Annotation: The data come from the RNA Mapping Database (RMDB), library OK3TST. An RNA of 207 nucleotides, treated with DMS and 2A3 and read out base by base. Reactivities are given for positions 27 through 156. The reactions ran in a buffer of 150 mM KOAc, 10 mM MgCl2 and 150 mM bicine (pH 8.5), at 24 C. For 2A3, 1,452 sequencing reads were counted.

RNA sequence: GGGAACGACUCGAGUAGAGUCGAAAAAGUAGGAUGAUACAGCAAGCAAAGCCAACUGUUACUGUUUUCUACAUGUUGAAAGGCAACCUGAUGAAUACAGAGCCGACCGUUGCAGAACUUGUCAGUUAUGGCAUCAAGGAAGGUAGAUUUUACAGGCCCUAACUCCUAUCUUCGGAUAGGAGUUAGGAAAAGAAACAACAACAACAAC
Reactivity to DMS in 0.01 (KOAc 150mM, MgCl2 10mM, bicine 150mM(pH8.5), 24C), signal-to-noise 1, nucleotides 027 to 156: a050g000u000a030g010g010a120u040g020a160u010a060c050a050g010c030a090a130g030c010a110a080a130g010c070c030a130a070c050u010g000u000u000a080c110u000g020u000u010u010u010c020u000a070c020a110u010g060u020u000g000a130a070a130g000g020c000a030a110c030c020u010g020a170u020g000a120a120u000a090c090a080g000a140g020c040c040g020a130c030c060g050u000u020g040c050a110g030a100a090c040u000u000g040u010c050a050g000u000u000a090u000g020g000c000a050u000c010a070a110g000g000a040a140g040g000u000a080g010a130u000u040u000u010a080c070a090g000g000c100
Reactivity to 2A3 in 0.01 (KOAc 150mM, MgCl2 10mM, bicine 150mM(pH8.5), 24C), signal-to-noise 3, nucleotides 027 to 156: a010g120u100a030g020g040a050u090g000a030u070a100c050a030g000c060a070a040g010c010a060a140a030g030c030c050a040a040c010u010g000u070u040a040c030u010g070u060u080u010u000c010u050a090c010a020u070g030u010u060g140a230a130a040g090g000c010a010a050c000c010u010g100a120u070g000a080a030u090a100c020a020g040a040g070c020c020g010a010c000c020g010u030u030g000c010a010g020a100a060c030u060u100g050u130c030a010g000u070u130a060u120g060g020c020a010u070c050a060a020g020g000a010a010g000g020u050a010g000a100u060u060u010u070a050c070a000g040g020c000

For DMS, 1,951 sequencing reads were counted.